[RMDB]
RNA sequence: GGGAACGACUCGAGUAGAGUCGAAAAGAUAUGGACCCACCCAGCUUUUGACGGCAAGUACUCGGAAACGAGUACAUUUGCCGAUAAGCUGGUGGGUCCUAAGUCAAAAGUUCAGUUCGCUGAACAACAUACACAGCGACUUCGGUCGCUGUGUAUGAAAAGAAACAACAACAACAAC
Reactivity to 2A3 in 0.01 (KOAc 150mM, MgCl2 10mM, bicine 150mM(pH8.5), 24C), signal-to-noise 1, nucleotides 027 to 126: g000a000u020a010u040g000g020a000c000c050c010a040c030c100c030a000g050c000u160u230u300u300g300a230c160g040g040c000a000a040g000u000a000c000u000c000g000g000a040a020a030c010g020a020g000u000a010c000a010u000u020u000g000c010c000g000a030u060a050a000g010c000u020g020g040u010g010g000g040u000c000c000u000a000a000g000u000c010a000a040a040a000g000u030u020c000a000g010u070u140c300g000c110u010g000a000a000c000a010a010
Reactivity to DMS in 0.01 (KOAc 150mM, MgCl2 10mM, bicine 150mM(pH8.5), 24C), signal-to-noise 1, nucleotides 027 to 126: g000a040u000a250u000g000g000a040c000c000c000a030c130c140c100a000g010c010u000u000u000u030g040a220c170g000g000c000a010a020g000u000a010c010u000c000g010g010a050a020a150c000g020a000g020u000a020c000a080u020u000u000g020c000c000g010a070u020a020a020g020c000u000g000g050u000g000g000g000u000c000c000u000a000a050g000u000c000a080a060a140a160g020u000u010c010a020g000u000u000c300g040c010u000g000a010a020c020a100a300